Record summary:
Chemical mapping of a 207-nucleotide RNA with 2A3 and DMS. 2A3 adducts were read by reverse transcription with SuperScript II with manganese. It was measured as part of the RMDB library OK3TST. The 2A3 profile rests on 5,549 reads. The DMS profile rests on 3,425 reads.
[RMDB]
RNA sequence: GGGAACGACUCGAGUAGAGUCGAAAAGAAAGAAAGAAAGAAAGGUAUGAAGUCCUAUUCACACUUGAUAGGAUAAACUUCAUAUUGAUCGUGUAUGUGCUAACGCACAUACACGAAUGCGCAUGCAGAACUGCAUGCAUGAACAUAGAGUGUGCAAAGGGAUCAUUUUAUUCGUAAAAUGAUCCCUAAAAGAAACAACAACAACAAC
Reactivity to 2A3 in 0.01 (KOAc 150mM, MgCl2 10mM, bicine 150mM(pH8.5), 24C), signal-to-noise 5, nucleotides 027 to 156: g040a010a050a010g090a030a070a030g080a050a090a010g090a060a080a010g030g000u010a000u010g010a000a000g020u020c010c000u000a000u020u030c040a020c010a000c060u020u040g000a000u010a000g000g020a020u100a050a140a020c000u010u000c000a000u010a020u050u060g040a040u030c000g000u000g000u000a000u000g020u000g010c070u150a130a050c180g000c000a000c000a000u000a000c000a000c000g000a000a010u040g010c030g000c010a000u000g000c010a010g070a300a080c210u050g010c010a010u020g000c010a010u110g060a020a010c040a020u080a040g020a030g020u010g010u030g010c070a200a020
Reactivity to DMS in 0.01 (KOAc 150mM, MgCl2 10mM, bicine 150mM(pH8.5), 24C), signal-to-noise 2, nucleotides 027 to 156: g010a210a130a050g000a100a100a090g000a110a100a090g000a120a100a240g020g010u000a010u010g010a010a050g010u000c000c010u000a000u000u010c050a080c040a070c120u000u010g000a010u000a020g000g020a210u000a060a130a130c010u010u000c000a010u010a020u000u000g010a140u000c000g020u000g030u000a000u000g030u000g000c000u000a070a170c300g040c000a010c000a010u000a000c010a000c030g010a000a010u000g010c040g000c000a010u000g020c030a070g020a110a130c140u010g040c010a030u000g020c000a020u000g000a100a100c110a070u000a080g000a060g020u000g040u010g000c090a110a160